[RMDB]
RNA sequence: GGGAACGACUCGAGUAGAGUCGAAAAUUGUGUGGGGCCUGUGCUAAUUUCCAUGCUGAGUUUAGUAGCAAAGGAAGCAUAUAUGGAGGAUACCACCCAGGACUUUUGAGUCAGCCAAGAGAGCUUCAGAAAUUCCUCCUUUGAUUUCCACAGAGUCCUAAUCUUGUCGAUUCGUCGACAAGAUUAGAAAAGAAACAACAACAACAAC
Reactivity to DMS in 0.01 (KOAc 150mM, MgCl2 10mM, bicine 150mM(pH8.5), 24C), signal-to-noise 2, nucleotides 027 to 156: u000u000g000u000g040u010g000g000g020g030c030c080u000g070u020g010c000u010a040a070u020u000u020c010c010a230u000g020c060u020g020a190g000u010u000u010a090g050u010a050g010c030a050a070a110g010g030a060a070g000c110a060u000a130u000a080u000g010g010a060g030g010a130u000a070c050c050a140c020c040c030a190g010g010a100c040u000u000u010u010g010a190g010u000c040a150g000c080c070a050a220g000a140g020a130g020c020u010u000c060a080g010a070a100a180u010u000c010c000u000c020c010u010u030u000g000a220u000u000u000c010c020a110c040a160g010a160g020u000c070
Reactivity to 2A3 in 0.01 (KOAc 150mM, MgCl2 10mM, bicine 150mM(pH8.5), 24C), signal-to-noise 1, nucleotides 027 to 156: u140u070g020u000g030u050g020g010g000g000c000c000u060g000u020g000c010u020a160a140u050u000u030c070c030a080u040g000c030u020g040a050g140u030u040u080a080g040u070a000g040c020a060a060a040g000g000a020a020g000c050a020u080a030u010a030u240g000g000a000g020g000a020u030a090c000c000a020c010c030c010a010g140g030a110c010u030u040u050u090g020a000g050u020c010a000g010c010c010a110a000g070a000g020a040g110c030u140u160c020a000g070a060a050a000u060u020c010c000u000c000c000u040u010u030g000a000u040u040u020c030c000a010c020a020g040a030g070u010c020